[RMDB]
RNA sequence: GGGAACGACUCGAGUAGAGUCGAAAACUGAGUGGAAAUCUGUGGAACUUCUGCAAAAUAAUAUUUCAAUUGCUGCAGAAUGUUAUUUGAUUGAUAUUUACAACCUUCCAUUGUGUAUGAUCAUGUUUAAAAUGUAUAUGUGUCUAUACAUUGCUGAUAGUAUGAUUUAGUUCGCUAAAUCAUACUAAAAAGAAACAACAACAACAAC
Reactivity to DMS in 0.01 (KOAc 150mM, MgCl2 10mM, bicine 150mM(pH8.5), 24C), signal-to-noise 3, nucleotides 027 to 156: c050u000g020a120g030u000g000g000a100a070a070u000c030u010g040u010g010g000a070a040c020u000u000c030u000g000c000a060a040a040a060u000a080a080u000a080u000u010u010c060a060a090u000u000g010c070u000g020c030a220g020a120a100u010g010u010u000a040u000u000u010g010a090u000u010g000a160u010a020u000u000u000a050c020a040a060c020c030u000u000c030c020a080u000u000g020u000g010u000a080u010g010a090u010c060a070u010g010u010u010u000a060a060a070a080u000g000u000a020u000a030u020g020u010g010u010c100u000a040u000a010c010a020u000u000g000c040u000g010a260
Reactivity to 2A3 in 0.01 (KOAc 150mM, MgCl2 10mM, bicine 150mM(pH8.5), 24C), signal-to-noise 4, nucleotides 027 to 156: c070u040g020a000g050u050g000g030a030a050a080u040c070u090g040u080g040g100a020a040c020u020u000c000u010g010c000a010a090a060a040u180a130a100u120a150u090u280u110c070a090a050u090u070g030c050u020g000c020a010g000a030a010u070g020u050u070a110u130u110u130g040a040u010u090g020a020u020a140u150u120u090a090c050a040a050c000c030u080u040c030c010a040u050u130g050u000g010u060a120u090g040a050u100c040a020u060g070u020u050u060a100a200a050a030u050g020u050a050u000a000u060g110u010g020u030c040u030a010u010a040c000a020u030u100g010c030u020g040a040